Chemical mapping of a 207-nucleotide RNA with 2A3 and DMS.
The data come from the RNA Mapping Database (RMDB), library OK3TST.
For DMS the reverse transcriptase was MarathonRT.

RNA sequence: GGGAACGACUCGAGUAGAGUCGAAAAACAGUUUUGGGAUUCAGGCCAGGCAGACAGCUUGGCGCCACUGGUGUCAUCUGCGCGUCACGAUGUAGCUACAUAAAGCCGGCUCGUUUGGCACUUCAGCACAGCUACUGAAGCAGUUUCAGCCGACCGCCUAACACCACUAUUUCGAUAGUGGUGUUAGAAAAGAAACAACAACAACAAC
Reactivity to 2A3 in 0.01 (KOAc 150mM, MgCl2 10mM, bicine 150mM(pH8.5), 24C), signal-to-noise 3, nucleotides 027 to 156: a010c050a040g010u080u090u110u160g080g020g020a110u120u130c110a080g060g040c030c000a020g020g000c010a020g050a300c030a010g020c030u020u040g000g000c020g000c000c010a090c050u070g040g020u040g060u030c020a050u020c050u070g020c050g020c060g100u110c020a020c090g030a040u090g020u120a010g010c010u070a060c030a210u220a080a140a000g010c020c010g030g000c020u030c070g040u020u080u000g030g000c030a010c030u010u030c010a010g020c070a040c030a150g020c040u140a050c010u020g010a010a000g010c060a040g000u020u060u050c020a010g010c000c010g020a040c030c000g000c000
Reactivity to DMS in 0.01 (KOAc 150mM, MgCl2 10mM, bicine 150mM(pH8.5), 24C), signal-to-noise 3, nucleotides 027 to 156: a060c050a120g010u000u000u000u000g010g040g000a200u000u000c040a090g000g010c010c020a070g000g000c000a100g010a120c090a090g020c050u000u020g020g010c040g020c030c020a090c040u000g030g010u010g000u010c030a050u010c050u020g020c110g000c090g040u010c030a090c070g020a080u010g050u000a090g010c040u000a120c070a120u010a050a090a060g020c030c000g030g000c020u000c040g030u000u000u010g020g020c070a030c010u000u010c000a020g020c020a190c080a210g030c040u010a020c010u060g000a030a060g040c040a060g010u000u000u000c020a100g010c000c000g020a030c030c050g020c100